Annotation:
The record gives the reactivity of an RNA of 170 nucleotides to 2A3 and DMS. For DMS the reverse transcriptase was MarathonRT. The RNA was probed in 150 mM KOAc, 10 mM MgCl2 and 150 mM bicine (pH 8.5) at 24 C. For 2A3, 7,738 sequencing reads were counted.
[RMDB]
RNA sequence: GGGAACGACUCGAGUAGAGUCGAAAAGUGUGGAUUGGAAAUCAACCCUACGGUUGUUACUUAUGUUAUGCACAACUAUGGUAUUGUUGUCUUCUGUGUAUCACUUGUAUGUCUUCAAUCAGGUCUUAAAGCUUACUCUUCGGAGUAAGCAAAAGAAACAACAACAACAAC
Reactivity to 2A3 in 0.01 (KOAc 150mM, MgCl2 10mM, bicine 150mM(pH8.5), 24C), signal-to-noise 7, nucleotides 027 to 129: g090u100g000u060g070g000a080u080u050g040g050a060a050a080u130c010a000a040c040c000c060u100a050c090g030g010u000u000g030u040u020a040c020u080u120a100u220g060u060u030a100u150g030c080a010c000a090a040c050u070a090u210g030g060u100a080u130u140g030u030u010g000u010c090u030u020c020u050g010u000g020u020a020u050c020a020c010u030u060g040u070a060u140g060u020c080u070u070c050a030a150u010c010a030g110g060u000c020u030u050a050a040a020
Reactivity to DMS in 0.01 (KOAc 150mM, MgCl2 10mM, bicine 150mM(pH8.5), 24C), signal-to-noise 3, nucleotides 027 to 129: g080u030g030u000g060g020a000u080u000g000g010a030a080a070u070c090a050a120c020c020c040u050a080c180g010g040u000u030g020u000u000a020c070u030u060a100u000g000u000u000a090u050g050c210a000c080a010a010c060u000a060u050g000g000u040a090u070u000g040u050u010g010u000c070u000u000c040u000g000u000g030u000a000u030c090a020c060u000u000g030u050a080u050g020u000c080u010u040c080a040a100u080c040a000g040g010u000c080u050u020a050a100a090
For 2A3 the reverse transcriptase was SuperScript II with manganese.